Conditions: 150 mM KOAc, 10 mM MgCl2 and 150 mM bicine (pH 8.5), 24 C. Chemical mapping of a 170-nucleotide RNA with 2A3 and DMS.

[RMDB]
RNA sequence: GGGAACGACUCGAGUAGAGUCGAAAAGGAUCUGGAGAGCACUCCCGGCCGUAUGGUCGAGUGUCCCCCCGGAGGGAGAGAACCACGCGGAGAAGGCGGAAAAAUCACCUCCAGAGGACCCCUUCAGCUACACCACCCUUCGGGGUGGUGAAAAGAAACAACAACAACAAC
Reactivity to 2A3 in 0.01 (KOAc 150mM, MgCl2 10mM, bicine 150mM(pH8.5), 24C), signal-to-noise 4, nucleotides 027 to 129: g040g000a060u040c010u000g010g040a020g000a010g020c030a020c020u060c030c080c010g000g010c000c000g160u190a180u300g020g000u000c000g030a020g010u060g050u030c020c000c010c000c010c040g020g050a020g030g000g000a150g010a010g000a050a020c040c020a050c050g010c030g010g080a110g040a160a040g060g000c060g000g000a000a110a000a020a060u020c010a040c010c030u060c020c010a000g020a030g050g040a070c000c000c000c010u040u090c010a010g000c000u040a000
Reactivity to DMS in 0.01 (KOAc 150mM, MgCl2 10mM, bicine 150mM(pH8.5), 24C), signal-to-noise 4, nucleotides 027 to 129: g030g040a100u000c020u000g020g020a050g030a130g020c070a060c050u020c090c080c050g080g030c010c000g080u070a090u070g020g040u020c040g070a040g010u030g020u040c040c050c010c020c010c040g000g000a010g030g100g010a240g010a130g010a080a030c050c080a120c110g030c090g050g040a080g030a030a080g020g050c000g040g020a000a030a050a100a150u020c050a150c080c010u000c020c030a000g020a030g010g010a210c070c020c000c070u000u000c050a080g000c000u040a090
For 2A3 the reverse transcriptase was SuperScript II with manganese.